[RMDB]
About this RNA: An RNA of 207 nucleotides, treated with DMS and 2A3 and read out base by base. The DMS profile rests on 2,869 reads. Reactivities are given for positions 27 through 156.
RNA sequence: GGGAACGACUCGAGUAGAGUCGAAAAGAAUCACCGUACCUAUUUAGGUUUACGCUCCAAGAUCGGUGGAUAGCAGCCCUAUCAAUAUCUAGGAGAACUGGGCUAUGUUUAGAAGAUUAGGUAGUCUAUUACACAGCCAUGUUCGCAUGGCUGUGAACCACUACAUGGUGUUCGCACCAUGUAGUGGAAAAGAAACAACAACAACAAC
Reactivity to DMS in 0.01 (KOAc 150mM, MgCl2 10mM, bicine 150mM(pH8.5), 24C), signal-to-noise 2, nucleotides 027 to 156: g020a120a090u000c030a170c010c020g020u000a060c000c010u010a250u030u000u000a080g030g000u000u020u000a120c020g020c010u000c000c000a030a140g020a050u000c030g030g060u030g030g030a030u010a060g000c050a230g000c100c130c020u000a110u000c070a090a130u000a100u010c080u000a060g020g020a080g020a090a100c060u000g000g010g000c030u000a030u010g000u000u000u000a070g030a070a130g000a160u000u010a070g030g030u010a090g030u000c020u000a090u000u000a230c000a000c000a000g050c000c000a050u000g040u000u000c240g050c020a040u000g000g020c000u010g030u000g010a030a110
Reactivity to 2A3 in 0.01 (KOAc 150mM, MgCl2 10mM, bicine 150mM(pH8.5), 24C), signal-to-noise 5, nucleotides 027 to 156: g050a030a060u110c000a000c020c010g020u030a010c000c000u080a170u300u250u260a030g010g010u030u050u030a020c040g010c010u010c010c010a000a020g010a050u050c010g010g020u010g020g060a040u060a020g080c130a040g030c000c000c010u070a070u110c070a060a030u040a010u220c010u020a010g000g030a030g000a030a040c080u090g000g010g010c000u020a010u070g130u040u090u060a080g040a200a070g030a180u210u110a060g070g050u000a000g010u000c020u030a130u080u120a070c000a000c000a000g020c000c010a020u000g040u040u040c200g000c080a000u000g000g000c000u000g000u000g000a000a000